[RMDB]
RNA sequence: GGGAACGACUCGAGUAGAGUCGAAAAGAAAGAAAGAAAGACACUCGAAAAAACUGAGUUUAUGUGUGUACUUGACGGCGAUCAGAGCAACGAUCUAGCACCAUAUAAAUUCAGUGUUUUCGUGGAAAUUAAAUAUAAUCUUCGGAUUAUAUUUAAUAAAAGAAACAACAACAACAAC
Reactivity to DMS in 0.01 (KOAc 150mM, MgCl2 10mM, bicine 150mM(pH8.5), 24C), signal-to-noise 3, nucleotides 027 to 126: g020a130a100a110g010a090a080a110g020a090a120a080g010a170c140a100c020u010c010g010a000a010a010a040a020a010c000u000g010a000g010u000u000u000a000u000g010u000g020u050g030u000a030c010u000u010g000a030c040g010g010c090g010a140u050c240a110g020a220g010c040a040a100c050g010a120u000c000u000a010g000c050a010c020c000a010u000a000u000a000a010a000u000u000c000a000g000u000g000u000u000u000u000c000g000u000g000g000a060a070
Reactivity to 2A3 in 0.01 (KOAc 150mM, MgCl2 10mM, bicine 150mM(pH8.5), 24C), signal-to-noise 5, nucleotides 027 to 126: g070a010a050a010g070a030a080a020g070a050a140a000g030a010c030a020c060u030c010g000a000a010a000a010a000a000c000u000g000a000g000u000u000u000a000u000g030u000g050u010g000u020a040c000u010u020g000a000c000g020g030c020g070a160u220c150a120g060a060g110c030a170a130c040g030a080u000c000u040a000g000c010a000c000c000a000u000a000u000a010a000a000u000u000c000a000g000u000g020u000u010u000u000c000g000u010g020g040a060a200
The record gives the reactivity of an RNA of 177 nucleotides to DMS and 2A3. The data come from the RNA Mapping Database (RMDB), libraries RFM100 and RFMREP. For 2A3, 5,049 sequencing reads were counted. 2A3 adducts were read by reverse transcription with SuperScript II with manganese.